Record summary: An RNA of 207 nucleotides, treated with 2A3 and read out base by base. It was measured as part of the RMDB library OK3TST. For 2A3, 346 sequencing reads were counted. 2A3 adducts were read by reverse transcription with SuperScript II with manganese.

RNA sequence: GGGAACGACUCGAGUAGAGUCGAAAAAUAAAUCUCUCAAUGCAUUCUUGCACCACUUUCGAGUGAUGGCCUAUUUUUUCACCAAAGCCUCGACGACAUGGCAGCUAUCAGUCGCGCGGUCAAACAAGAGCUGCUGGACGACCUCUACCCAGAAAUCGACAUACUAGGCGUUCGCGCCUAGUAUGUCAAAAGAAACAACAACAACAAC
Reactivity to 2A3 in 0.01 (KOAc 150mM, MgCl2 10mM, bicine 150mM(pH8.5), 24C), signal-to-noise 1, nucleotides 027 to 156: a000u150a010a010a030u050c030u000c000u020c190a020a140u030g000c000a010u060u080c130u230u150g000c050a050c020c000a030c070u140u150u130c110g090a030g080u030g030a140u060g100g070c000c010u050a020u000u050u090u000u000u140c000a020c080c000a090a090a000g020c000c010u130c100g230a300c000g010a000c000a020u030g000g000c000a000g000c010u030a060u180c070a130g060u000c000g010c010g030c080g060g100u050c040a020a190a150c070a150a000g020a010g090c010u020g050c000u000g020g060a000c020g050a020c020c000u000c000u000a070c020c010c000a020g110a070a000a000u170c060